[RMDB]
RNA sequence: GGGAACGACUCGAGUAGAGUCGAAAAGCUGUAGUUGACUAUGGCGAUAACGUUCACGAUCAUUUAAAAUAUCACGGGGUGGAUGAAUGAACCUAUACGAAUUUAUUGCAGCGCAUCCGGUAUUGACGGUUAUCAUCCUGUUAAUCAUCAAUCACACCAACUGGUCACCUUUCGAGGUGACCAGUUGAAAAGAAACAACAACAACAAC
Reactivity to 2A3 in 0.01 (KOAc 150mM, MgCl2 10mM, bicine 150mM(pH8.5), 24C), signal-to-noise 1, nucleotides 027 to 156: g000c000u020g000u000a020g000u040u160g060a060c000u010a000u030g020g070c060g020a040u040a070a010c000g000u000u000c010a010c100g100a190u020c040a050u060u150u300a180a240a160a090u300a040u150c060a050c200g000g060g000g000u010g020g000a000u000g000a060a120u030g000a040a070c000c010u050a040u040a130c040g040a020a010u040u040u140a040u140u050g060c010a000g000c000g000c060a020u040c000c000g050g010u060a060u000u080g010a100c070g000g030u000u000a000u010c050a040u050c000c000u030g000u090u050a050a080u020c070a040u040c010a050a030u060c020a000c010a020c100